Structure probing data (2A3) for a 207-nucleotide construct. Source: RMDB library M2RFPK, as collected in RNAgym. The reactions ran in a buffer of 150 mM KOAc, 10 mM MgCl2 and 150 mM bicine (pH 8.5), at 24 C. For 2A3, 388 sequencing reads were counted. As a SHAPE reagent, 2A3 marks flexible, mostly unpaired nucleotides at the ribose 2'-OH.
[RMDB]
RNA sequence: GGGAACGACUCGAGUAGAGUCGAAAAUCCUUUCUCGAUAGAGAUUGGAGUCAUACAACCCCAGAAACCAUUCCUAAUACCUUGAGUAUUGCUGAAUUCAGUUUAGCGUGCAUGCUCUUGGCUAUUCAUACCAAGGACAACUUCGGUUGUCCUUGAACCCAUUCUGACUCUUCGGAGUCAGAAUGGGAAAAGAAACAACAACAACAAC
Reactivity to 2A3 in 0.01 (KOAc 150mM, MgCl2 10mM, bicine 150mM(pH8.5), 24C), signal-to-noise 1, nucleotides 027 to 156: u000c000c000u000u000u000c100u090c070g140a240u120a270g000a030g010a000u000u000g000g000a000g110u160c020a000u130a160c070a040a190c000c040c000c000a060g160a030a210a050c050c000a090u180u040c100c000u010a010a010u040a080c000c040u000u040g000a010g010u010a070u270u000g000c040u030g040a110a050u090u140c060a100g100u020u050u120a050g000c130g000u040g070c010a000u030g000c000u000c000u000u000g000g020c010u010a020u000u050c000a040u100a180c110c000a000a000g020g000a000c000a010a000c010u030u050c090g120g000u010u020g030u100c000c040u000u000g000a000a000